Chemical mapping of a 207-nucleotide RNA with DMS and 2A3.
The RNA was probed in 150 mM KOAc, 10 mM MgCl2 and 150 mM bicine (pH 8.5) at 24 C.
The data come from the RNA Mapping Database (RMDB), library OK3TST.
The DMS profile rests on 13,254 reads.
The 2A3 profile rests on 5,286 reads.
RNA sequence: GGGAACGACUCGAGUAGAGUCGAAAACUGGUUAAUCACAUGAUCUAGUGGCUUCUGCUAAUGUGAACAUGAGGGAUGUCAAACACAAAUGUAAUAGUCCCUGUGUGACUGAGAUGAUUAUUGUCAGAGACAGAUCAAACAGCGAAAGAGCUGGAGACACCUAAUUAAAUUUCGAUUUAAUUAGGUGAAAAGAAACAACAACAACAAC
Reactivity to DMS in 0.01 (KOAc 150mM, MgCl2 10mM, bicine 150mM(pH8.5), 24C), signal-to-noise 5, nucleotides 027 to 156: c040u010g020g010u000u000a070a160u010c020a060c040a120u000g010a090u000c020u000a080g020u000g020g000c020u000u000c050u020g020c060u000a080a080u000g010u000g020a090a080c030a060u000g020a080g020g010g030a060u000g030u030c110a070a090a100c050a280c070a060a100a120u000g010u010a030a120u000a150g010u000c010c000c010u000g050u000g020u000g000a150c030u000g000a100g000a150u000g010a070u000u000a060u000u000g010u000c030a150g010a200g020a100c040a060g010a070u000c020a060a070a130c050a020g000c000g000a080a090a160g010a160g010c000u000g010g000a140g010a240
Reactivity to 2A3 in 0.01 (KOAc 150mM, MgCl2 10mM, bicine 150mM(pH8.5), 24C), signal-to-noise 7, nucleotides 027 to 156: c030u030g000g050u080u110a080a040u100c010a030c020a100u090g040a040u050c050u080a060g030u040g080g030c030u080u050c020u160g040c020u070a070a030u080g020u040g060a060a020c010a030u110g160a080g000g000g020a010u030g100u150c080a060a150a010c080a020c040a100a140a080u160g040u120a070a040u070a110g040u010c000c010c010u010g000u010g000u010g020a050c020u040g020a030g040a150u100g010a030u030u120a080u260u110g060u050c030a020g020a000g010a140c010a010g010a010u020c010a070a120a010c010a010g000c010g060a100a130a090g070a050g000c010u020g010g010a010g050a010